Source: RMDB library OK3TST, as collected in RNAgym. Chemical mapping of a 207-nucleotide RNA with 2A3. The RNA was probed in 150 mM KOAc, 10 mM MgCl2 and 150 mM bicine (pH 8.5) at 24 C.
RNA sequence: GGGAACGACUCGAGUAGAGUCGAAAAUUGUUCUGAUGUGUGUGCUCUGAGUCAGAGGAGCUUCAGGGACAGAAGGGACCGGGCAUGGGGACACAGGAGUUCCGGCUGCAGGCCUGUGUGGACCUGUGGCUGGACCCAGGCGAGGCCUCUGGGUCUACCCGUCACUAUUAUUCGUAAUAGUGACGGGAAAAGAAACAACAACAACAAC
Reactivity to 2A3 in 0.01 (KOAc 150mM, MgCl2 10mM, bicine 150mM(pH8.5), 24C), signal-to-noise 1, nucleotides 027 to 156: u030u040g000u070u000c060u110g020a050u050g070u010g030u030g040u070g180c000u000c000u060g080a100g220u180c070a070g050a040g090g010a070g130c000u080u050c060a020g000g050g090a110c040a130g090a100a050g040g000g000a010c060c070g040g020g000c060a080u110g030g000g010g010a020c050a040c080a190g050g090a050g000u130u020c040c000g010g000c050u000g030c000a030g020g010c010c000u100g080u130g080u300g060g020a300c000c020u000g000u000g010g010c000u010g000g000a000c010c000c000a000g000g000c030g090a000g000g160c000c000u000c060u030g010g000g020u010c000u010a070